[RMDB]
Structure probing data (DMS and 2A3) for a 177-nucleotide construct. High DMS reactivity at an A or C suggests that its Watson-Crick edge is free. The reactions ran in a buffer of 150 mM KOAc, 10 mM MgCl2 and 150 mM bicine (pH 8.5), at 24 C. The data come from the RNA Mapping Database (RMDB), libraries RFM100 and RFMREP.
RNA sequence: GGGAACGACUCGAGUAGAGUCGAAAAUUCCUUCUUCUUCAACGGUUUGGACGAGCCGACUCGCUUCGCCUGCUACCCCGUGUCGCACCCUCACGGUGCGUGGCGUUUCCUCUCGCCCCAAUUAUGCUUUAUCGUAUGUAUUCGUACAUACGAUAAAAAAAGAAACAACAACAACAAC
Reactivity to DMS in 0.01 (KOAc 150mM, MgCl2 10mM, bicine 150mM(pH8.5), 24C), signal-to-noise 9, nucleotides 027 to 126: u010u010c010c000u000u010c080u010u000c050u000u000c070a100a150c090g000g010u000u000u010g010g010a080c090g000a130g010c050c030g000a110c060u010c060g010c050u010u010c060g020c030c020u000g010c040u000a100c050c020c020c040g020u010g010u010c020g000c040a040c020c010c070u010c140a100c150g000g010u010g010c040g030u010g010g010c040g010u000u010u000c020c010u000c030u000c060g000c030c000c010c040a080a100u030u010a090u020g010c170
Reactivity to 2A3 in 0.01 (KOAc 150mM, MgCl2 10mM, bicine 150mM(pH8.5), 24C), signal-to-noise 9, nucleotides 027 to 126: u020u000c010c000u020u070c030u070u010c010u080u060c030a090a060c030g040g040u040u060u090g120g030a040c040g020a020g020c030c000g080a080c020u010c030g040c020u070u050c020g020c010c010u020g030c010u070a080c000c000c000c020g030u030g030u050c020g010c030a040c000c000c010u110c030a070c070g020g000u030g010c020g000u010g020g010c020g010u010u050u010c000c010u020c000u010c020g030c010c000c000c010a050a070u160u100a120u230g080c060